RNA sequence: GGGAACGACUCGAGUAGAGUCGAAAACUGAGACGCUUCGGCGUCUCAGAAAUCGAACACAGGCGAAGGAAGCAAGAGCUAUCAUGCCAAUGACCACGUGGAAAACUCAUACGUUCGCGUAUGAGAAGGCGUAUACGUAGUUCGCUACGUAUACGCCAAAAGAAACAACAACAACAAC
Reactivity to DMS in 0.01 (KOAc 150mM, MgCl2 10mM, bicine 150mM(pH8.5), 24C), signal-to-noise 1, nucleotides 027 to 126: c000u050g000a020g030a030c000g050c010u000u020c220g000g020c000g050u010c020u000c000a000g000a000a110a000u000c110g000a080a040c060a140c130a170g000g000c030g000a160a040g000g000a030a090g010c140a030a160g030a110g020c050u020a020u000c000a200u050g050c000c010a050a070u000g000a150c130c010a000c150g010u000g000g000a080a100a120a130c010u000c000a050u000a000c000g020u020u030c300g000c000g040u000a000u010g000a000g030a010a040
Reactivity to 2A3 in 0.01 (KOAc 150mM, MgCl2 10mM, bicine 150mM(pH8.5), 24C), signal-to-noise 1, nucleotides 027 to 126: c000u010g000a000g000a000c000g010c020u020u050c180g210g000c020g010u020c000u000c000a000g000a000a010a000u130c010g050a050a010c080a000c010a080g000g050c020g070a110a040g110g040a000a000g000c040a090a080g060a040g100c010u070a060u300c020a000u150g000c030c030a020a040u100g040a090c010c020a070c070g040u080g070g030a000a070a040a040c000u000c000a000u000a000c030g000u020u040c250g000c000g090u000a010u000g000a010g020a020a020